[RMDB]
RNA sequence: GGGAACGACUCGAGUAGAGUCGAAAAGAAAAGAGCGAGACCUCCGAUUCGAGAGCUCCUGGACUCCUCAGCUCUGGAGUCCUCCGACCCGUGAGGUCGAGGAUCCCCGCGCAGGGAGGCAGCCACCGACGUGAAUGCUUCGGCAUUCACAAAAGAAACAACAACAACAAC
Reactivity to DMS in 0.01 (KOAc 150mM, MgCl2 10mM, bicine 150mM(pH8.5), 24C), signal-to-noise 3, nucleotides 027 to 129: g020a030a040a040a040g030a000g030c000g000a150g010a100c080c030u020c030c060g020a120u020u010c140g020a070g010a180g000c000u000c040c060u040g010g000a070c040u000c050c020u040c030a080g000c030u030c060u000g000g000a000g000u000c020c020u000c000c000g000a000c000c000c000g050u000g040a040g000g000u010c040g020a050g000g000a050u020c050c000c030c070g000c090g000c000a110g010g000g000a040g010g030c000a070g020c050c020a020c070c050g020a100c140
Reactivity to 2A3 in 0.01 (KOAc 150mM, MgCl2 10mM, bicine 150mM(pH8.5), 24C), signal-to-noise 9, nucleotides 027 to 129: g100a000a080a000a000g090a010g030c050g000a040g030a130c010c010u030c030c040g090a130u050u130c060g010a010g010a000g090c010u020c000c030u040g010g020a050c010u020c020c010u080c080a050g010c030u010c050u060g000g010a020g020u000c000c000u020c030c040g010a020c010c000c030g120u200g070a130g000g000u010c000g000a010g000g010a040u060c010c010c000c000g010c000g000c010a040g020g010g000a000g000g020c010a000g010c010c020a030c000c000g040a050c080